RNA sequence: GGGAACGACUCGAGUAGAGUCGAAAACAAAGACCUCCAGAAACUCUCCUCCCCACCUCUCCAGAGGUUUCUUGGGAAUGUCCUGUGAGCUCAACUCUUGGAGAAGACAGUGCUGAGCCCAGAUUCCCGACACACAGGACUUCGGUCCUGUGUGUCGAAAAGAAACAACAACAACAAC
Reactivity to 2A3 in 0.01 (KOAc 150mM, MgCl2 10mM, bicine 150mM(pH8.5), 24C), signal-to-noise 1, nucleotides 027 to 126: c010a010a090a020g090a020c000c000u000c010c020a060g040a040a090a010c010u010c030u030c000c020u040c000c010c000c000a040c010c000u080c000u030c060c000a040g010a030g130g000u000u180u040c070u080u070g010g000g010a030a030u120g060u160c010c000u060g010u070g030a050g000c050u010c010a070a110c000u000c000u070u160g040g040a080g020a070a010g140a010c070a020g010u000g020c040u000g120a020g000c000c000c000a010g010a000u010u000c040c030